[RMDB]
RNA sequence: GGGAACGACUCGAGUAGAGUCGAAAAGGGUGAUGUCUCCUAACCUUUAUCAAUGGGGGCACUCGGUCGUGCUGUGGGUAGAAAUUUUAGUUCGUGCCUACCUUAGACGCUUGUCGUCGGGAGUAUGUGGGACUGAUGAACUUCGGUUCAUCAGUAAUACGUUAACUCUGUUCGCAGAGUUAACGUAAAAAGAAACAACAACAACAAC
Reactivity to DMS in 0.01 (KOAc 150mM, MgCl2 10mM, bicine 150mM(pH8.5), 24C), signal-to-noise 1, nucleotides 027 to 156: g040g020g000u000g010a050u010g020u000c000u010c010c040u000a120a070c040c030u000u000u000a180u000c060a090a110u020g000g040g030g020g000c030a070c020u000c000g000g020u000c000g020u000g000c030u000g010u000g010g080g060u020a060g000a030a040a130u010u000u000u000a150g030u000u000c050g010u010g050c080c020u000a060c040c030u000u000a170g000a100c000g000c050u020u000g040u000c020g030u000c030g000g000g120a140g010u000a040u000g010u000g020g010g000a140c010u000g010a020u020g000a020a020c000u000u000c230g030g000u000u000c000a020u010c000a010g010u000a050a220
Reactivity to 2A3 in 0.01 (KOAc 150mM, MgCl2 10mM, bicine 150mM(pH8.5), 24C), signal-to-noise 2, nucleotides 027 to 156: g040g040g050u060g040a080u030g020u100c000u050c010c010u040a110a100c000c000u100u200u230a150u160c120a070a100u240g000g000g000g000g000c000a010c050u020c010g040g000u040c010g010u040g050c050u060g010u130g000g050g030u040a050g090a020a060a050u160u170u070u080a080g000u060u070c060g030u040g000c010c010u020a040c010c000u020u010a030g020a030c000g020c050u050u230g080u230c000g010u020c010g030g000g000a070g040u070a070u140g010u080g020g030g040a010c000u000g000a000u000g000a000a000c010u040u040c250g080g000u000u000c000a000u000c000a000g000u000a000a020